[RMDB]
Structure probing data (DMS and 2A3) for a 177-nucleotide construct.
RNA sequence: GGGAACGACUCGAGUAGAGUCGAAAAAAUAGCGGGUCAAGGUACAACGCAGAGAGAUAGGCUCAUCCCAAGUUCUCUUCGGAGUACCAAGACUUCGGUAGAGAAGAGAUACCGACUCUUCAUAGAACAUCGAAUGUUACUUCGGUAACAUUCGAUGAAAAGAAACAACAACAACAAC
Reactivity to DMS in 0.01 (KOAc 150mM, MgCl2 10mM, bicine 150mM(pH8.5), 24C), signal-to-noise 2, nucleotides 027 to 126: a050a090u000a010g000c000g040g020g010u000c010a010a300g010g000u000a010c010a010a290c010g010c090a050g000a010g000a030g010a040u000a230g000g010c160u000c300a090u000c230c000c040a060a170g010u000u000c000u000c000u000u000c000g010g030a300g010u000a010c000c030a000a300g000a030c000u000u010c040g010g010u000a010g000a150g040a000a040g010a010g010a080u020a170c010c010g000a200c000u000c010u010u000c010a280u020a050g020a100a150
Reactivity to 2A3 in 0.01 (KOAc 150mM, MgCl2 10mM, bicine 150mM(pH8.5), 24C), signal-to-noise 1, nucleotides 027 to 126: a030a000u090a030g030c050g010g010g020u020c010a060a010g000g000u000a000c010a050a000c030g000c050a010g000a000g000a010g010a070u070a200g040g040c020u020c050a170u200c010c030c010a020a020g060u010u010c010u020c030u000u000c000g000g010a010g010u000a020c010c020a000a000g010a010c010u050u040c010g000g030u030a080g010a000g000a070a000g010a000g030a030u090a090c000c030g070a070c000u000c010u050u060c010a050u070a050g270a130a040
The DMS profile rests on 760 reads. Conditions: 150 mM KOAc, 10 mM MgCl2 and 150 mM bicine (pH 8.5), 24 C. DMS adducts were read by reverse transcription with MarathonRT. In probing experiments dimethyl sulfate is read out at A N1 and C N3, which are open when not base-paired.